[RMDB]
Source information: This 207-nucleotide RNA was probed chemically with 2A3. It was measured as part of the RMDB library ARCHII. Reactivities are given for positions 27 through 156. The reactions ran in a buffer of 150 mM KOAc, 10 mM MgCl2 and 150 mM bicine (pH 8.5), at 24 C.

RNA sequence: GGGAACGACUCGAGUAGAGUCGAAAAACUGUAAACAACGCAGAUUACGCUCCAGCUUACGCUAAAGCUGCGUGAGUUAAUCUCCUUUUGGAGCUGGACUGAUUAGAAUUUCUAGCGUUUUAAUCGCUCCAUAACCUUAAGCUAGACGCUUUUAAAACAGAUAUCGAUUGUUCGCAAUCGAUAUCUGAAAAGAAACAACAACAACAAC
Reactivity to 2A3 in 0.01 (KOAc 150mM, MgCl2 10mM, bicine 150mM(pH8.5), 24C), signal-to-noise 4, nucleotides 027 to 156: a000c010u020g010u040a110a160a170c070a070a050c120g000c010a020g020a110u130u170a060c050g000c000u010c000c000a010g000c010u000u010a000c000g000c030u120a300a070a170g160c180u090g000c050g000u000g000a010g000u030u030a050a120u050c040u080c040c020u040u070u100u100g000g010a000g010c010u010g000g000a000c010u030g000a000u000u000a000g000a010a010u040u170u000c010u000a000g000c010g010u000u000u010u000a000a000u000c000g020c040u000c010c030a130u120a270a140c020c040u180u150a100a010g000c010u000a000g010a010c020g090c050u070u100u050u230a030a100a010a020